An RNA of 177 nucleotides, treated with DMS and 2A3 and read out base by base.
Conditions: 150 mM KOAc, 10 mM MgCl2 and 150 mM bicine (pH 8.5), 24 C.
RNA sequence: GGGAACGACUCGAGUAGAGUCGAAAACCGAACGGCAAACCAUGGCACUACGAAGUAAACGUAUGAUAGGCAAGAGUAAAGAAAACGCAUUAAUCAAGCGUAGUAUAAGGUGGCAUGCGAUUAUGCACCAUUCACUUUCUUUCGAGAAAGUGAAUGGAAAAGAAACAACAACAACAAC
Reactivity to DMS in 0.01 (KOAc 150mM, MgCl2 10mM, bicine 150mM(pH8.5), 24C), signal-to-noise 6, nucleotides 027 to 126: c000c000g000a090a100c180g010g000c030a030a100a070c080c030a030u000g000g000c030a070c020u010a100c140g000a120a100g010u030a020a060a060c030g010u010a100u010g000a040u000a080g000g000c030a090a080g010a180g000u050a030a100a100g000a080a070a060a040c080g000c010a040u020u000a060a060u010c090a080a300g000c010g000u010a020g010u010a040u020a070a100g000g010u010g000g000c020a030u010g020c100g010a090u000u010a050u000g000c060a140
Reactivity to 2A3 in 0.01 (KOAc 150mM, MgCl2 10mM, bicine 150mM(pH8.5), 24C), signal-to-noise 9, nucleotides 027 to 126: c010c000g000a090a030c040g080g000c010a010a000a020c030c000a050u050g100g000c010a000c030u070a030c070g110a120a040g070u150a100a130a010c000g040u060a050u150g020a040u060a040g060g000c050a070a030g070a030g140u270a150a130a040g130a040a080a010a000c050g000c020a060u070u160a090a060u090c040a100a070g010c010g020u010a020g050u040a090u040a130a060g050g000u010g040g060c000a000u020g020c030g070a060u040u060a070u150g020c000a010